Overview
This 177-nucleotide RNA was probed chemically with DMS and 2A3. The reactions ran in a buffer of 150 mM KOAc, 10 mM MgCl2 and 150 mM bicine (pH 8.5), at 24 C.
RNA sequence: GGGAACGACUCGAGUAGAGUCGAAAACACUGCAUGACAACCGUGUGUGCUAAUGGGGUUUCGCUGGUGAGAAGCUGCCAAGUACUUAGUCCGGCUCCGGGAAUUACCAAGCUGUAUGCCGCGGUGACAUACACCGCCCAUUCGUGGGCGGUGUAUGAAAAGAAACAACAACAACAAC
Reactivity to DMS in 0.01 (KOAc 150mM, MgCl2 10mM, bicine 150mM(pH8.5), 24C), signal-to-noise 4, nucleotides 027 to 126: c070a110c070u010g010c060a080u030g010a110c090a100a090c060c030g020u000g010u000g020u010g000c040u000a120a100u010g000g000g000g000u000u000u000c070g000c030u000g000g000u010g020a110g000a080a050g010c050u000g010c030c030a050a090g000u000a090c090u000u010a060g000u000c050c060g000g000c040u000c060c080g000g010g000a080a070u000u010a070c030c030a110a090g000c050u000g010u010a080u000g010c110c040g010c060g010g020u000g010a180
Reactivity to 2A3 in 0.01 (KOAc 150mM, MgCl2 10mM, bicine 150mM(pH8.5), 24C), signal-to-noise 3, nucleotides 027 to 126: c020a000c020u100g020c050a090u090g060a100c020a070a040c080c020g030u070g010u020g000u010g050c010u070a210a040u090g020g010g010g040u040u000u000c060g010c080u100g060g090u110g040a080g010a080a000g000c020u040g120c000c000a030a000g000u000a030c050u050u090a020g080u040c020c020g000g000c040u080c070c080g060g000g010a050a020u090u040a080c020c020a020a010g060c050u050g010u100a050u080g030c030c000g020c020g080g010u030g020a010